[RMDB]
RNA sequence: GGGAACGACUCGAGUAGAGUCGAAAAAUGGGAUCCUGUGAGAGGGGGUCCCUCCAUUGGCAGCUGGACUGUUCUUUGGGGCCUUAUGUGGUGUUUGCCUCUGAGGUACUCAGGGGCAUUUAGGUUUCUUAAAAUUGUCUUUCGAGACAAUUUUAAGAAAAGAAACAACAACAACAAC
Reactivity to 2A3 in 0.01 (KOAc 150mM, MgCl2 10mM, bicine 150mM(pH8.5), 24C), signal-to-noise 3, nucleotides 027 to 126: a030u070g000g000g000a000u050c060c020u080g050u120g110a220g020a070g030g000g030g000g010u000c000c000c000u010c000c000a010u010u030g050g000c000a010g000c070u170g080g000a230c030u040g040u220u300c010u090u000u020g010g000g000g080c000c020u180u140a180u110g120u070g030g080u030g040u030u030u070g000c010c010u010c000u000g010a030g110g160u220a190c030u000c010a000g000g000g000g000c000a000u020u000u000a030g000g020u010u000u000